[RMDB]
RNA sequence: GGGAACGACUCGAGUAGAGUCGAAAAGAUAUGGAAUACCUGGUGGAAAUGGUGGUCGGAAACGACCACACAUUUGUGAAGCCAGGGUAUUCCUAAGUCAAAACACCCAGUGUUCGCACUGGGUGAACUUUCAUCUUCAGUUCGCUGAAGAUGAAAGAAAAGAAACAACAACAACAAC
Reactivity to DMS in 0.01 (KOAc 150mM, MgCl2 10mM, bicine 150mM(pH8.5), 24C), signal-to-noise 5, nucleotides 027 to 126: g000a010u000a060u030g010g000a040a010u010a030c000c000u010g010g050u010g010g000a020a010a010u000g000g010u010g000g020u000c010g030g000a020a030a040c010g020a020c000c000a000c000a010c010a010u000u000u000g020u000g010a030a300g000c000c000a010g010g010g000u010a000u000u000c000c000u000a000a030g000u000c010a130a100a190a110c020a010c000c000c000a010g010u000g000u010u020c280g030c000a010c000u000g000g000g030u000g000a000a040
Reactivity to 2A3 in 0.01 (KOAc 150mM, MgCl2 10mM, bicine 150mM(pH8.5), 24C), signal-to-noise 2, nucleotides 027 to 126: g000a000u020a020u070g000g000a010a000u010a020c010c000u020g020g030u030g180g300a040a000a000u030g010g010u010g000g000u020c020g000g000a010a020a010c000g000a010c030c000a020c010a000c010a000u010u010u010g090u060g230a040a010g000c010c000a030g060g000g010u000a000u000u000c000c010u000a020a000g000u000c000a020a030a100a150c010a000c000c010c000a010g010u010g030u060u100c300g050c160a000c000u000g010g000g000u000g000a000a000